[RMDB]
RNA sequence: GGGAACGACUCGAGUAGAGUCGAAAAAACGUUGCAUGAUCGUAAAACAUGCCCGGCUUACCGUGAGCCGCGUUUGAAAGAAAGGUUUACACGGACUCUGUUGCGUUACGCACGUACCUAACUUGUGAAAACGGCAUCUUGUUCGCAAGAUGCCGAACAACAUCCUGCAGUUCGCUGCAGGAUGUUGAAAAGAAACAACAACAACAAC
Reactivity to 2A3 in 0.01 (KOAc 150mM, MgCl2 10mM, bicine 150mM(pH8.5), 24C), signal-to-noise 4, nucleotides 027 to 156: a000a000c000g000u010u000g000c000a000u000g010a090u220c030g050u160a150a120a010a000c000a000u000g000c000c000c010g000g000c010u020u070a030c000c000g020u010g010a000g000c000c000g000c010g020u060u130u170g120a070a050a020g040a010a040a020g040g000u030u090u130a020c020a000c000g110g020a180c030u070c090u150g110u170u060g040c030g080u110u090a100c170g010c010a010c020g010u030a020c010c000u030a060a100c030u030u040g050u040g180a050a050a020a030c000g000g000c000a000u000c000u000u010g020u090u090c110g010c110a000a000g000a010u010g000c000c000g000a000a000
Reactivity to DMS in 0.01 (KOAc 150mM, MgCl2 10mM, bicine 150mM(pH8.5), 24C), signal-to-noise 1, nucleotides 027 to 156: a060a060c080g030u000u010g010c020a050u000g000a030u000c010g030u030a080a080a090a070c030a010u000g000c030c040c040g000g000c000u000u000a100c040c140g040u000g030a050g000c020c020g020c040g000u000u010u000g030a090a060a090g020a090a100a100g010g010u000u000u030a090c050a020c000g010g000a210c140u000c070u020g000u000u010g040c040g010u000u000a130c050g060c020a030c090g000u040a100c000c050u020a060a110c060u000u010g010u020g040a080a040a070a170c000g000g050c010a000u000c000u000u000g000u010u030c300g010c030a040a010g000a000u000g050c050c010g020a000a030

The record gives the reactivity of an RNA of 207 nucleotides to 2A3 and DMS. The reactions ran in a buffer of 150 mM KOAc, 10 mM MgCl2 and 150 mM bicine (pH 8.5), at 24 C. The 2A3 profile rests on 2,394 reads. The DMS profile rests on 2,281 reads. Values cover nucleotides 27 to 156.